This 207-nucleotide RNA was probed chemically with 2A3 and DMS.
RNA sequence: GGGAACGACUCGAGUAGAGUCGAAAAAAGGACGUGUGGCGCUCGUACAUCUACGGUGUGCUGGCCGCCGGGCAGGCUGUGCUGAUCGGCGUGCUCGGCAUGACUGAGUCUCAGGUGGCCCCGAUCAUCGGCGCGGUGCUGGCACUGGUCGGCGGCUUAAUUGUAGAACUUUCGAGUUCUACAAUUAAAAAGAAACAACAACAACAAC
Reactivity to 2A3 in 0.01 (KOAc 150mM, MgCl2 10mM, bicine 150mM(pH8.5), 24C), signal-to-noise 4, nucleotides 027 to 156: a010a000g050g010a030c030g060u070g030u040g090g000c020g000c030u040c030g030u040a020c010a160u040c080u110a040c080g050g010u050g000u020g060c020u020g030g000c010c000g000c000c000g000g010g010c000a010g050g000c010u040g040u060g050c050u090g040a120u080c000g010g000c080g070u120g000c020u030c010g010g000c010a020u040g040a040c010u020g040a020g110u030c040u030c110a050g020g050u030g040g030c000c020c000c010g020a030u020c010a000u060c020g050g010c020g030c040g090g040u130g030c050u070g070g030c050a060c150u020g020g170u010c000g020g030c030g010g000c020u000
Reactivity to DMS in 0.01 (KOAc 150mM, MgCl2 10mM, bicine 150mM(pH8.5), 24C), signal-to-noise 2, nucleotides 027 to 156: a100a070g010g000a060c020g000u000g030u000g010g000c050g000c030u020c090g010u000a080c070a080u000c020u000a120c050g010g010u010g010u000g000c030u000g020g020c010c020g020c010c010g030g000g020c000a060g020g040c020u000g020u000g020c070u010g010a060u000c000g020g020c040g030u010g030c040u000c020g020g010c030a020u000g000a080c030u000g020a140g010u000c030u000c030a110g020g020u000g010g000c020c010c000c020g000a050u000c020a090u000c040g010g020c010g030c030g030g010u000g010c030u020g030g020c050a100c070u010g020g010u000c000g010g030c070g030g010c050u010
The 2A3 profile rests on 3,530 reads. It was measured as part of the RMDB library OK3TST. High DMS reactivity at an A or C suggests that its Watson-Crick edge is free. The reactions ran in a buffer of 150 mM KOAc, 10 mM MgCl2 and 150 mM bicine (pH 8.5), at 24 C.